Chemical mapping of a 177-nucleotide RNA with DMS and 2A3. 2A3 adducts were read by reverse transcription with SuperScript II with manganese. It was measured as part of the RMDB library OK1LIB.
RNA sequence: GGGAACGACUCGAGUAGAGUCGAAAAGGUACACGGCGAGGUUGGAUCGCCGCCCGAGAAGCUGAAGCAGGGGGCACGGCCCGCACGCGUACGGGUCCAGCGUCAGGGACAUGGCGUGGUUGGCCUCUCCUCAUACAUCGUUCGCGAUGUAUGAGGAAAAAGAAACAACAACAACAAC
Reactivity to DMS in 0.01 (KOAc 150mM, MgCl2 10mM, bicine 150mM(pH8.5), 24C), signal-to-noise 2, nucleotides 027 to 126: g020g020u020a060c090a120c040g010g010c020g000a080g030g030u000u030g010g020a170u000c080g010c000c000g000c000c000c020g000a120g030a140a090g010c070u000g050a150a050g050c050a190g000g000g000g000g000c030a150c030g020g000c000c000c030g010c020a130c030g000c040g030u040a080c050g000g010g000u010c000c070a190g000c010g000u010c060a070g000g000g000a120c140a120u020g030g000c030g010u000g010g000u000u000g000g000c010c020u000c070
Reactivity to 2A3 in 0.01 (KOAc 150mM, MgCl2 10mM, bicine 150mM(pH8.5), 24C), signal-to-noise 2, nucleotides 027 to 126: g080g000u030a010c030a000c030g000g020c060g010a080g070g000u100u050g020g100a070u050c080g010c020c000g150c000c000c000g040a110g060a080a050g010c100u230g030a100a020g040c070a070g000g000g020g040g000c030a010c070g060g000c000c020c020g000c010a200c050g050c040g030u070a050c000g000g000g000u040c020c040a010g000c000g010u000c000a070g060g000g150a000c080a190u020g010g000c000g020u010g000g020u060u090g040g000c040c000u040c010